RNA sequence: GGGAACGACUCGAGUAGAGUCGAAAAAUAGGAAAAAGACUGAUGAGUGUCGUAGAUAAAUCUUCGAUUCCGAGUAGUCUGACUAUUGGUAUCGAGGUAAUCCAUCUUUAAAACCAUCGCCGUUAGAAAAUUGCACUAGUUUCGACUAGUGCAAUUUAAAAGAAACAACAACAACAAC
Reactivity to DMS in 0.01 (KOAc 150mM, MgCl2 10mM, bicine 150mM(pH8.5), 24C), signal-to-noise 6, nucleotides 027 to 126: a080u020a100g010g000a030a070a090a110a060g000a020c030u000g020a050u010g000a150g010u000g010u000c080g000u010a020g010a050u010a050a130a120u010c000u000u000c000g000a010u010u010c140c020g000a070g010u020a010g010u000c140u020g020a090c010u000a030u000u000g000g000u000a030u000c050g010a020g010g010u010a060a060u020c110c090a050u010c030u010u010u010a050a050a120a060c020c020a020u000c040g020c110c060g030u000u010a080g010a080
Reactivity to 2A3 in 0.01 (KOAc 150mM, MgCl2 10mM, bicine 150mM(pH8.5), 24C), signal-to-noise 6, nucleotides 027 to 126: a000u090a010g040g040a040a080a030a060a020g060a040c070u070g020a020u020g060a080g170u040g020u040c040g040u010a000g010a020u070a080a110a050u030c000u000u010c010g000a010u030u020c020c010g000a010g050u030a010g010u010c240u210g050a080c010u010a010u020u050g020g000u030a010u040c010g000a000g000g010u020a020a030u040c040c010a020u000c010u030u150u080a080a160a020a010c030c010a020u020c020g030c060c030g070u060u050a040g100a060